Source information:
Chemical mapping of a 177-nucleotide RNA with 2A3 and DMS. The RNA was probed in 150 mM KOAc, 10 mM MgCl2 and 150 mM bicine (pH 8.5) at 24 C. For DMS, 838 sequencing reads were counted. 2A3 adducts were read by reverse transcription with SuperScript II with manganese. For 2A3, 1,549 sequencing reads were counted. The data come from the RNA Mapping Database (RMDB), library TTRDEL.

RNA sequence: GGGAACGACUCGAGUAGAGUCGAAAAGAUAUGGACGCACCUACCCACCGAACUACGUUACUCUAUCGGAAACGAUAGAGGAACGCGAGGGUGCGUCCUAAGUCAAAUCUCACCUUCGGGUGAGAAAGAAUCUGCUUGUGUUCGCACAAGCAGAUUCAAAAGAAACAACAACAACAAC
Reactivity to 2A3 in 0.01 (KOAc 150mM, MgCl2 10mM, bicine 150mM(pH8.5), 24C), signal-to-noise 1, nucleotides 027 to 126: g090a060u150a120u180g000g000a020c020g000c010a010c010c010u160a260c090c030c060a040c000c120g030a080a130c210u260a090c300g030u010u020a000c000u010c000u010a000u000c020g000g000a050a010a000c020g020a020u000a000g010a000g000g000a000a040c020g000c060g070a130g020g000g030u010g010c000g050u020c000c000u000a000a000g020u050c000a060a050a080u030c000u010c000a020c020c020u040u060c300g220g000g010u000g000a010g000a010a010a010
Reactivity to DMS in 0.01 (KOAc 150mM, MgCl2 10mM, bicine 150mM(pH8.5), 24C), signal-to-noise 1, nucleotides 027 to 126: g000a060u020a080u020g020g010a000c000g030c000a000c000c000u000a140c060c050c070a300c090c050g000a120a090c050u000a180c020g000u000u000a000c000u000c000u000a000u000c000g010g000a030a040a090c000g000a000u000a010g010a110g010g040a010a010c010g000c050g010a090g000g010g020u000g000c000g010u000c000c000u000a020a050g010u000c100a080a050a250u000c020u010c000a000c000c010u000u000c170g070g040g020u000g000a000g000a000a040a160